[RMDB]
RNA sequence: GGGAACGACUCGAGUAGAGUCGAAAAACGGACUACGGUCCGAAGGGUUCGGGGUACUAGUGUGAAUGCCCGGCUAGUACCCUGUGCUAUUGGUUUAUCUACUGAUGUUCAAUUAAGGGCAUUUGAAAAAAGACUCCUAACUUCGGUUAGGAGUCAACCUAAUAGUCUACUUCGGUAGACUAUUAGGAAAAGAAACAACAACAACAAC
Reactivity to 2A3 in 0.01 (KOAc 150mM, MgCl2 10mM, bicine 150mM(pH8.5), 24C), signal-to-noise 3, nucleotides 027 to 156: a000c010g000g000a000c020u030a050c190g080g020u040c010c010g010a070a020g100g000g010u060u180c040g000g000g000g000u000a000c000u000a000g030u000g000u040g200a060a030u020g010c030c010c020g010g000c000u000a010g000u010a000c000c000c000u000g030u030g030c030u090a090u090u100g090g000u070u090u160a130u130c100u070a080c050u070g110a150u160g140u230u200c100a200a060u230u230a300a300g000g000g020c000a000u030u040u060g000a040a000a000a000a000a000g010a000c000u000c000c000u010a010a010c000u020u070c220g030g010u000u000a010g020g010a000g000u000c000a000a000
Reactivity to DMS in 0.01 (KOAc 150mM, MgCl2 10mM, bicine 150mM(pH8.5), 24C), signal-to-noise 1, nucleotides 027 to 156: a170c040g020g000a030c000u010a130c260g030g010u000c020c010g010a060a110g030g000g060u000u000c070g010g000g010g010u010a000c030u010a030g050u020g020u000g010a030a070u000g000c000c020c000g000g030c020u000a020g030u000a020c000c000c000u000g040u010g050c020u000a040u000u000g020g010u000u000u010a110u050c050u000a240c040u000g020a090u010g030u020u030c060a120a150u010u010a090a090g030g010g060c000a000u010u010u000g000a000a020a050a090a140a140g020a030c000u000c000c000u000a000a010c000u000u000c240g050g010u000u000a000g010g000a020g010u000c010a000a030